[RMDB]
RNA sequence: GGGAACGACUCGAGUAGAGUCGAAAAGAUAUGGACACCUAACUCGCACAUGAGGUCGGAAACGACUACCCACCAUGUGAACUACGAGAGGGUGUCCUAAGUCAAAAGUCUACCUUCGGGUAGACAACUAAUGUUUUUAGUUCGCUAAAAACAUUAGAAAAGAAACAACAACAACAAC
Reactivity to 2A3 in 0.01 (KOAc 150mM, MgCl2 10mM, bicine 150mM(pH8.5), 24C), signal-to-noise 7, nucleotides 027 to 126: g010a010u090a060u190g000g000a010c010a000c010c010u080a250a250c010u010c010g000c010a000c000a000u010g010a010g000g030u010c010g030g050a080a080a040c020g020a010c010u130a100c020c080c000a020c010c000a010u010g010u010g030a090a100c120u180a050c300g000a010g010a040g010g020g000u010g000u000c000c000u000a030a000g030u000c020a060a080a060a100g010u010c000u000a010c000c000u030u070c300g100g000g000u000a000g000a010c000a000a000
Reactivity to DMS in 0.01 (KOAc 150mM, MgCl2 10mM, bicine 150mM(pH8.5), 24C), signal-to-noise 8, nucleotides 027 to 126: g000a050u000a300u010g000g020a010c000a020c000c000u010a090a150c010u000c000g010c000a010c020a020u000g000a080g020g000u000c010g010g010a120a110a190c010g010a020c000u000a050c050c040c080a300c060c010a020u000g010u000g000a040a090c120u000a300c030g000a010g030a300g000g000g020u000g010u010c000c000u000a010a060g010u010c040a090a080a100a100g010u000c000u000a000c000c000u000u010c210g020g010g000u000a010g010a000c000a030a090
This 177-nucleotide RNA was probed chemically with 2A3 and DMS. For DMS, 9,371 sequencing reads were counted. Conditions: 150 mM KOAc, 10 mM MgCl2 and 150 mM bicine (pH 8.5), 24 C. Reactivities are given for positions 27 through 126.